[RMDB]
Background:
Chemical mapping of a 207-nucleotide RNA with 2A3. Reactivities are given for positions 27 through 156.
RNA sequence: GGGAACGACUCGAGUAGAGUCGAAAAGGGGUCAGGUUCAACAGCUCCCUUCUAAUCUUUGAUCAUAACUGAAGCCUCCACGGUUAUGGGAGAUUGAGGGAGACAUGAACCUGACGGAGGCACCCAAAACACCAUUAUACUUCGGUAUAAUGGUGAACCUUGUCCUAGUGUUCGCACUAGGACAAGGAAAAGAAACAACAACAACAAC
Reactivity to 2A3 in 0.01 (KOAc 150mM, MgCl2 10mM, bicine 150mM(pH8.5), 24C), signal-to-noise 3, nucleotides 027 to 156: g000g000g150g000u000c000a000g010g010u030u000c040a150a030c030a200g040c020u020c020c020c030u040u110c150u250a030a010u030c050u300u240u020g010a010u040c000a000u000a000a010c000u030g050a080a020g010c000c000u010c000c000a010c000g000g000u010u000a000u010g010g000g000a030g010a010u010u010g010a000g030g000g010a010g010a000c010a140u300g000a000a000c000c000u010g000a000c000g000g000a000g000g010c000a020c000c000c000a070a130a020a010c000a010c000c000a010u000u000a000u000a000c010u030u090c260g070g000u000a000u000a000a000u000g010g000u000g010a010a030